[RMDB]
RNA sequence: GGGAACGACUCGAGUAGAGUCGAAAACUGCUGGGAAGCUGGGGUUCUGGGCCACAGCCGGCCCUGGACGUGGAGGGGGGCAUCAGGCCAGACCCCCCAGGGGCUCACAGGGCUCUGGGAGGCCCUGUAUCCUUAGACCAUUCGUGGUCUAAGGAUAAAAAGAAACAACAACAACAAC
Reactivity to 2A3 in 0.01 (KOAc 150mM, MgCl2 10mM, bicine 150mM(pH8.5), 24C), signal-to-noise 1, nucleotides 027 to 126: c030u060g010c040u080g010g010g060a120a070g050c130u080g000g000g040g000u070u080c030u020g050g090g000c000c030a060c040a090g100c070c090g080g060c000c010c030u020g030g030a020c040g050u080g060g100a100g030g000g020g000g000g030c000a030u050c040a050g070g090c020c000a010g030a030c020c010c010c000c000c010a000g000g000g000g000c030u040c130a010c000a000g000g010g030c010u000c030u130g050g040g030a040g000g010c000c000c000u000g000
Reactivity to DMS in 0.01 (KOAc 150mM, MgCl2 10mM, bicine 150mM(pH8.5), 24C), signal-to-noise 3, nucleotides 027 to 126: c070u010g010c090u000g000g020g010a070a090g020c080u010g010g000g000g010u000u010c030u000g010g020g000c000c020a060c210a140g000c150c130g000g050c000c000c000u010g000g000a050c100g010u000g020g010a180g020g000g020g000g010g000c080a060u000c160a090g010g020c050c050a070g000a120c030c010c010c000c010c030a060g010g000g000g000c160u000c120a080c020a010g010g000g000c030u000c060u000g000g000g010a120g010g000c010c000c000u000g000

Chemical mapping of a 177-nucleotide RNA with 2A3 and DMS. For DMS, 3,371 sequencing reads were counted. For 2A3, 1,581 sequencing reads were counted. The RNA was probed in 150 mM KOAc, 10 mM MgCl2 and 150 mM bicine (pH 8.5) at 24 C.